[RMDB]
RNA sequence: GGGAACGACUCGAGUAGAGUCGAAAAAUGCCGCAUUCAGAGACGGUCACUCUAGUGGGCCACUGUCAAUCUAGCGUUGACAUCUACAUACUAUAUAGUAAUACCAAUACUCAAGACUACGAAACGGACGCUAUCGUGCGUUCGCGCACGAUAGCGUAAAAGAAACAACAACAACAAC
Reactivity to 2A3 in 0.01 (KOAc 150mM, MgCl2 10mM, bicine 150mM(pH8.5), 24C), signal-to-noise 1, nucleotides 027 to 126: a000u300g000c000c000g270c030a000u010u020c090a000g000a000g010a110c000g000g000u080c030a050c000u200c000u000a000g030u000g010g000g010c000c120a090c040u070g000u080c000a000a070u050c000u090a010g000c030g010u000u000g040a000c000a000u080c030u110a030c000a070u230a040c070u120a000u110a000u240a120g190u080a120a060u030a170c000c000a110a140u120a050c000u000c080a240a000g090a000c080u200a050c050g200a100a000a000c050g170g060
Conditions: 150 mM KOAc, 10 mM MgCl2 and 150 mM bicine (pH 8.5), 24 C. Chemical mapping of a 177-nucleotide RNA with 2A3. For 2A3, 382 sequencing reads were counted.